[RMDB]
RNA sequence: GGGAACGACUCGAGUAGAGUCGAAAAUCUUUGGGAAUGGUACCAACUAAAGCACAUACUCUGAUCUAAAUAAUUUUUUGAUCAGAAUGCUAAAUUCUCUAAAUUUUUUAAUUAGCUUCAAUAAUGUUCCAAUCAAUCUACAGAACAACGAUCUGUACCUAUAGUAAUAGUUCGCUAUUACUAUAGGAAAAGAAACAACAACAACAAC
Reactivity to 2A3 in 0.01 (KOAc 150mM, MgCl2 10mM, bicine 150mM(pH8.5), 24C), signal-to-noise 2, nucleotides 027 to 156: u040c060u040u030u080g010g000g030a030a010u020g000g030u080a100c000c140a080a050c080u140a210a060a090g030c020a110c000a070u220a050c080u010c010u020g000a000u000c000u070a050a020a030u150a010a150u250u040u040u020u070u000g000a000u000c000a000g000a010a000u000g000c000u090a270a280a060u120u080c010u000c020u090a070a140a210u120u100u070u070u080u220a160a200u130u090a100g080c030u150u080c090a070a190u090a120a150u210g030u000u070c010c000a020a090u080c050a070a070u040c070u040a050c010a020g070a080a060c050a030a040c210g090a060u040c000u000g000u030a040
Chemical mapping of a 207-nucleotide RNA with 2A3. The reactions ran in a buffer of 150 mM KOAc, 10 mM MgCl2 and 150 mM bicine (pH 8.5), at 24 C. The data come from the RNA Mapping Database (RMDB), library OK3TST. For 2A3, 761 sequencing reads were counted.